[RMDB]
RNA sequence: GGGAACGACUCGAGUAGAGUCGAAAAGAAGUGCGGCCAUACCCGGGCACAAGGACGUUCAUCUGACCAUUAUCGGAGAUGUUCGUCCGAUUACACUUGACGGCUGUUUUGUCACGUCUUGUGGAGAGGGUACCAGCACGUUCGCGUGUUGGUACCCAAAAGAAACAACAACAACAAC
Reactivity to DMS in 0.01 (KOAc 150mM, MgCl2 10mM, bicine 150mM(pH8.5), 24C), signal-to-noise 4, nucleotides 027 to 126: g000a100a060g020u030g010c120g000g010c030c020a070u010a080c050c000c010g000g030g040c030a050c120a220a150g010g000a000c000g010u000u020c010a000u000c010u000g010a170c000c010a070u050u060a090u050c200g000g000a050g000a010u000g010u000u010c000g000u000c000c000g000a010u040u010a050c000a010c010u000u010g000a030c040g020g010c030u030g000u010u030u010u010g030u040c080a150c040g010u000c010u000u000g000u000g010g010a160g010a260
Reactivity to 2A3 in 0.01 (KOAc 150mM, MgCl2 10mM, bicine 150mM(pH8.5), 24C), signal-to-noise 8, nucleotides 027 to 126: g140a100a030g060u100g070c090g070g020c020c000a040u060a120c030c000c000g000g030g000c020a010c010a040a040g010g000a000c000g000u000u000c000a000u000c010u110g220a210c030c010a130u230u170a160u300c130g010g000a020g000a000u000g010u000u000c000g000u000c010c000g010a000u010u060a020c010a000c000u010u010g000a010c010g040g030c050u080g190u190u170u250u160g120u150c090a050c120g010u000c000u000u020g010u020g020g010a050g020a020
The record gives the reactivity of an RNA of 177 nucleotides to DMS and 2A3.
The 2A3 profile rests on 6,095 reads.
High DMS reactivity at an A or C suggests that its Watson-Crick edge is free.
Conditions: 150 mM KOAc, 10 mM MgCl2 and 150 mM bicine (pH 8.5), 24 C.
The data come from the RNA Mapping Database (RMDB), library OK1LIB.